[RMDB]
RNA sequence: GGGAACGACUCGAGUAGAGUCGAAAAACUUGCUUGUUAAAUUACUGCGUGGAAUGCCGAUUCCAGAUUUUGAUUUAGACGAUUUUAUUGACGCACCAUGCUAUUGCUUUAACGCUGAGGGUGAUGCUAGACUUCUUGUUCGCAAGAAGUAAAAGAAACAACAACAACAAC
Reactivity to 2A3 in 0.01 (KOAc 150mM, MgCl2 10mM, bicine 150mM(pH8.5), 24C), signal-to-noise 9, nucleotides 027 to 129: a010c040u050u060g030c020u060u090g020u030u040a040a030a020u110u080a050c040u040g010c030g050u040g010g050a170a100u090g040c040c050g050a030u080u000c040c020a050g040a100u080u090u060u100g170a150u040u070u130a090g010a080c090g040a080u000u050u090u100a170u050u170g020a030c030g000c010a010c010c000a020u060g010c030u060a090u120u140g030c030u070u050u080a070a020c050g000c010u020g010a060g020g040g000u050g020a020u050g020c010u030a030g020
Reactivity to DMS in 0.01 (KOAc 150mM, MgCl2 10mM, bicine 150mM(pH8.5), 24C), signal-to-noise 9, nucleotides 027 to 129: a090c070u030u020g000c070u010u020g020u000u000a020a030a040u000u040a050c100u040g000c000g040u010g010g010a060a060u030g020c070c050g000a150u020u000c070c060a070g000a110u000u000u000u000g010a090u010u020u020a080g010a120c120g000a070u010u010u010u010a070u040u020g030a180c300g010c050a050c000c010a010u000g000c020u020a080u040u030g010c080u000u030u030a060a050c130g020c050u010g000a020g010g010g020u020g010a060u000g020c020u020a090g020
This 170-nucleotide RNA was probed chemically with 2A3 and DMS. The DMS profile rests on 134,257 reads. Conditions: 150 mM KOAc, 10 mM MgCl2 and 150 mM bicine (pH 8.5), 24 C. The data come from the RNA Mapping Database (RMDB), library 15KLIB. For DMS the reverse transcriptase was MarathonRT.